[RMDB]
RNA sequence: GGGAACGACUCGAGUAGAGUCGAAAAGAUAUGGACCACCGCUGGAGAAGCGAUCGGAAACGAUCGGCUUCGUUGAAAGCGAUGGUCCUAAGUCAAACGUUAAAGGAGGGUUCGCCCUCCUUUAACGGUCCUUGUUAUUGUUCGCAAUAACAAGGACAAAAGAAACAACAACAACAAC
Reactivity to DMS in 0.01 (KOAc 150mM, MgCl2 10mM, bicine 150mM(pH8.5), 24C), signal-to-noise 8, nucleotides 027 to 126: g000a030u000a250u010g000g010a010c000c000a010c010c010g020c010u000g010g030a140g020a010a000g010c010g000a010u000c010g010g000a060a040a120c000g010a010u000c000g030g020c000u000u000c010g020u020u010g000a170a260a040g020c000g020a010u000g000g000u000c000c000u000a000a060g000u000c010a110a130a300c010g000u000u000a000a010a010g000g010a020g010g000g020u000u020c300g000c000c000c000u000c000c000u000u000u000a000a000c010g010
Reactivity to 2A3 in 0.01 (KOAc 150mM, MgCl2 10mM, bicine 150mM(pH8.5), 24C), signal-to-noise 5, nucleotides 027 to 126: g010a000u030a010u080g000g000a000c000c010a000c020c020g000c020u070g280g110a130g010a050a000g010c000g010a010u010c000g020g010a030a010a010c020g010a000u010c050g280g110c080u000u000c000g020u120u200g180a060a020a000g000c000g000a010u010g010g000u010c000c010u000a000a000g000u000c010a090a090a080c010g000u000u000a000a000a000g010g010a010g030g060g030u080u260c300g230c000c000c000u000c000c000u000u010u000a000a000c000g010